[RMDB]
RNA sequence: GGGAACGACUCGAGUAGAGUCGAAAAAGAACUGUGUCUCAGAGGAAUAAGGUAGUAUGAUAGAUCAGGAUUCCUCUCAUGCUUCCAUACAGGAACACAGAUGGAUAUAUACAUUUACACACACGUACCUCAGGCAUUAGUUCGCUAAUGCCUGAGGAAAAGAAACAACAACAACAAC
Reactivity to 2A3 in 0.01 (KOAc 150mM, MgCl2 10mM, bicine 150mM(pH8.5), 24C), signal-to-noise 2, nucleotides 027 to 126: a030g080a020a010c010u000g000u010g010u020c010u020c100a120g030a080g090g110a220a090u100a180a040g000g030u050a020g010u020a010u050g030a050u140a090g030a060u100c100a010g300g040a130u120u010c010c000u000c000u000c010a020u010g030c000u020u000c020c000a030u050a150c050a100g110g000a020a030c010a010c000a010g010a030u040g070g030a070u030a000u000a000u000a150c060a100u080u120u300a030c080a000c000a010c010a000c100g020u070a130
Reactivity to DMS in 0.01 (KOAc 150mM, MgCl2 10mM, bicine 150mM(pH8.5), 24C), signal-to-noise 1, nucleotides 027 to 126: a190g020a020a060c030u030g010u000g000u000c110u000c060a080g020a050g000g000a090a090u020a190a090g000g000u000a030g040u000a040u000g000a090u010a030g000a070u010c220a120g000g010a220u020u000c030c010u010c060u000c070a060u000g010c080u000u020c000c000a100u000a150c100a100g000g020a050a020c010a030c060a030g020a070u010g000g000a040u000a050u000a070u000a080c070a100u000u000u040a060c110a020c160a060c070a090c050g000u000a070